[RMDB]
RNA sequence: GGGAACGACUCGAGUAGAGUCGAAAAGCAAGUCGCAUAGCAAAACCGCGGCAAGUGGAGUUAGCGAGAGGAGGCUGGGUUUUGGCUUCCUUAAGCAAUCGGUCACCGAGAAGGUGUGGUCGUUACCUAGACAGUUUUCUGUUCGCAGAAAACUGAAGUAUUCUAAUAUCUUCGGAUAUUAGAAUACAAAAGAAACAACAACAACAAC
Reactivity to DMS in 0.01 (KOAc 150mM, MgCl2 10mM, bicine 150mM(pH8.5), 24C), signal-to-noise 3, nucleotides 027 to 156: g020c010a070a220g020u000c030g100c020a180u010a090g050c050a050a060a130a270c040c120g020c030g020g000c060a090a100g010u000g000g000a300g020u000u010a140g000c020g000a300g000a040g010g020a020g040g030c010u000g010g040g010u020u010u000u010g010g000c010u000u000c010c010u010u000a010a300g000c000a040a050u000c060g010g020u000c000a180c020c000g020a190g020a120a200g000g000u000g010u010g030g020u000c000g020u000u000a080c040c040u000a190g020a250c010a020g010u000u000u000u000c000u010g020u000u010c250g020c030a030g000a020a000a010a020c010u000g000a000a110
Reactivity to 2A3 in 0.01 (KOAc 150mM, MgCl2 10mM, bicine 150mM(pH8.5), 24C), signal-to-noise 7, nucleotides 027 to 156: g030c020a030a040g010u010c010g000c030a060u140a050g060c100a110a110a060a040c090c060g000c010g010g020c040a060a050g020u050g040g050a120g030u120u180a040g040c010g000a030g000a000g040g010a000g010g000c010u070g080g200g080u080u110u210u300g040g000c000u000u010c000c000u000u000a010a000g000c000a000a030u050c030g030g010u040c000a000c010c030g040a070g080a200a090g030g020u090g020u050g040g000u000c000g010u010u040a160c000c000u030a070g030a090c000a000g000u000u000u000u000c000u010g050u040u100c220g000c060a000g010a000a000a000a000c000u010g000a020a020